The record gives the reactivity of an RNA of 207 nucleotides to DMS and 2A3. High 2A3 reactivity points to a flexible backbone, as in loops and unpaired stretches. The data come from the RNA Mapping Database (RMDB), library M2RFPK. Conditions: 150 mM KOAc, 10 mM MgCl2 and 150 mM bicine (pH 8.5), 24 C.

[RMDB]
RNA sequence: GGGAACGACUCGAGUAGAGUCGAAAAGGGCCGUUCACUGGAUCCGAAGGCUCUAGAAGGAUAAUAUAGGCACUCCAUACCCUACUCCGACUCAAUACGUCCCCGUCGUACAGAAUGGUAACAUAUCGAACACAACCUAACUUCGGUUAGGUUGUAAUAGACCCAUAGGAUUCGUCCUAUGGGUCUAAAAAGAAACAACAACAACAAC
Reactivity to DMS in 0.01 (KOAc 150mM, MgCl2 10mM, bicine 150mM(pH8.5), 24C), signal-to-noise 1, nucleotides 027 to 156: g020g040g040c000c010g020u000u000c020a120c100u010g010g010a160u000c070c000g010a120a120g010g000c020u010c010u000a030g000a080a100g030g010a080u000a040a130u000a140u000a080g000g040c040a060c080u000c020c060a210u000a020c040c010c010u000a040c200u000c050c010g000a020c020u000c010a080a090u000a080c090g020u000c010c000c000c050g020u000c060g000u000a160c060a060g030a050a090u000g010g000u020a060a110c080a140u010a070u030c050g000a130a090c130a080c000a030a010c000c000u000a020a050c010u010u010c300g080g000u010u000a010g000g010u010u010g020u000a020a100
Reactivity to 2A3 in 0.01 (KOAc 150mM, MgCl2 10mM, bicine 150mM(pH8.5), 24C), signal-to-noise 2, nucleotides 027 to 156: g000g000g000c060c010g060u070u030c090a050c120u100g020g030a090u000c000c010g050a070a020g000g010c020u000c020u040a090g080a120a050g020g020a090u090a190a050u090a120u090a150g020g010c040a020c160u020c020c000a060u080a180c000c000c000u050a040c040u040c010c020g040a030c010u000c060a000a080u080a150c030g070u090c000c000c010c010g000u010c020g020u020a020c190a160g080a110a120u060g070g020u110a090a000c020a010u150a030u170c020g040a090a020c040a000c000a040a000c000c000u000a000a000c000u000u040c060g110g000u000u000a010g000g000u000u000g000u000a000a010